[RMDB]
RNA sequence: GGGAACGACUCGAGUAGAGUCGAAAAGAAAGCGCGACAGUUUCUACCUGAGGCCGGUAAGGUAGUUACUGGAGGGACAGAAUGUCUCGAGUCGUAUGACCGGCCAAAUGCGACGAGCGCGAAGAAAGGGAAAUACCUUGUUCGCAAGGUAUUUCCCAAAAGAAACAACAACAACAAC
Reactivity to 2A3 in 0.01 (KOAc 150mM, MgCl2 10mM, bicine 150mM(pH8.5), 24C), signal-to-noise 2, nucleotides 027 to 126: g110a000a040a000g020c040g000c000g000a010c000a000g000u000u000u000c000u010a000c010c010u090g050a070g030g020c000c000g010g000u030a020a040g010g000u010a000g000u000u000a000c000u000g020g020a050g020g040g000a010c010a040g270a190a090u090g060u010c000u000c010g010a000g000u020c010g000u020a070u050g030a020c000c000g010g000c020c020a060a030a050u180g000c010g010a000c050g030a110g080c030g010c040g020a050a010g100a030a050a070
Reactivity to DMS in 0.01 (KOAc 150mM, MgCl2 10mM, bicine 150mM(pH8.5), 24C), signal-to-noise 1, nucleotides 027 to 126: g000a130a100a030g030c000g020c030g000a220c000a000g000u000u000u000c020u000a000c000c020u050g000a060g000g030c000c000g000g000u010a090a020g000g000u000a000g000u020u000a020c000u000g000g000a170g000g060g010a000c010a110g010a080a110u030g000u000c000u000c020g000a130g010u000c000g000u000a020u010g050a100c030c000g000g000c010c010a020a090a080u000g000c000g000a030c100g000a170g000c000g040c000g000a140a120g010a060a060a080
This 177-nucleotide RNA was probed chemically with 2A3 and DMS. DMS adducts were read by reverse transcription with MarathonRT. The RNA was probed in 150 mM KOAc, 10 mM MgCl2 and 150 mM bicine (pH 8.5) at 24 C. Reactivities are given for positions 27 through 126.